Source: RMDB library OK1LIB, as collected in RNAgym. Structure probing data (2A3) for a 177-nucleotide construct. 2A3 adducts were read by reverse transcription with SuperScript II with manganese. The reactions ran in a buffer of 150 mM KOAc, 10 mM MgCl2 and 150 mM bicine (pH 8.5), at 24 C.
[RMDB]
RNA sequence: GGGAACGACUCGAGUAGAGUCGAAAAGCAAUCUGCAGACCUUCUCUUAGGAGUACCCAGAGAAGUCCUUUCGGAUGUCAUUGUGGACUUCGGAACAAUACUGACUAUAUUGGGCUUAGAGAGCGGACGGAACCCUCCUUUUCGAAGGAGGGUUCCGAAAAGAAACAACAACAACAAC
Reactivity to 2A3 in 0.01 (KOAc 150mM, MgCl2 10mM, bicine 150mM(pH8.5), 24C), signal-to-noise 1, nucleotides 027 to 126: g000c000a000a110u060c010u100g070c060a000g000a140c040c000u090u090c000u010c000u020u090a040g040g060a070g180u290a140c000c000c000a000g000a000g000a050a000g010u000c040c020u000u270u000c000g010g160a180u290g080u050c090a080u090u210g090u290g140g000a060c000u020u040c130g000g000a030a030c000a060a060u040a200c060u090g140a110c000u110a000u000a110u140u080g000g040g010c000u010u040a010g000a000g010a000g110c050g090g000a000